[RMDB]
RNA sequence: GGGAACGACUCGAGUAGAGUCGAAAAGUUCCCCUGAUGUCCAGUCCCUCCCCGCUCCUGGAGAAGGGAGACUCGGGAACGCCUAGCAUCUGAGGGACGAAGCCGCCCCCGGGCGCUCCCCUCGGAGAUCCUUGAAGAUUCGUCUUCAAGAAAAGAAACAACAACAACAAC
Reactivity to 2A3 in 0.01 (KOAc 150mM, MgCl2 10mM, bicine 150mM(pH8.5), 24C), signal-to-noise 9, nucleotides 027 to 129: g010u010u010c010c000c000c020u080g070a080u160g110u040c030c010a020g050u010c010c000c000u010c010c000c000c000g030c040u080c030c040u130g070g050a150g030a110a070g030g010g000a020g010a010c010u010c030g010g000g020a030a020c020g030c010c020u050a070g070c030a060u000c000u010g010a020g010g010g010a030c070g040a050a010g060c090c030g020c010c010c000c010c020g040g010g000c010g000c000u010c000c000c000c000u000c000g000g000a010g000a010u030c000
Reactivity to DMS in 0.01 (KOAc 150mM, MgCl2 10mM, bicine 150mM(pH8.5), 24C), signal-to-noise 9, nucleotides 027 to 129: g000u010u010c010c000c010c100u030g020a120u030g000u000c020c030a040g020u000c000c000c000u020c000c000c000c000g020c060u010c040c050u000g000g000a140g020a130a120g030g000g030a050g000a180c030u030c040g000g000g000a060a050c170g000c050c020u040a090g040c110a080u030c030u020g030a020g010g030g000a110c110g030a070a190g000c070c030g040c050c000c000c080c160g010g000g020c010g020c060u020c010c000c000c010u010c020g020g010a010g020a080u040c050
Source: RMDB library 15KLIB, as collected in RNAgym.
This 170-nucleotide RNA was probed chemically with 2A3 and DMS.
For DMS the reverse transcriptase was MarathonRT.
The 2A3 profile rests on 102,279 reads.
The DMS profile rests on 107,840 reads.
2A3 adducts were read by reverse transcription with SuperScript II with manganese.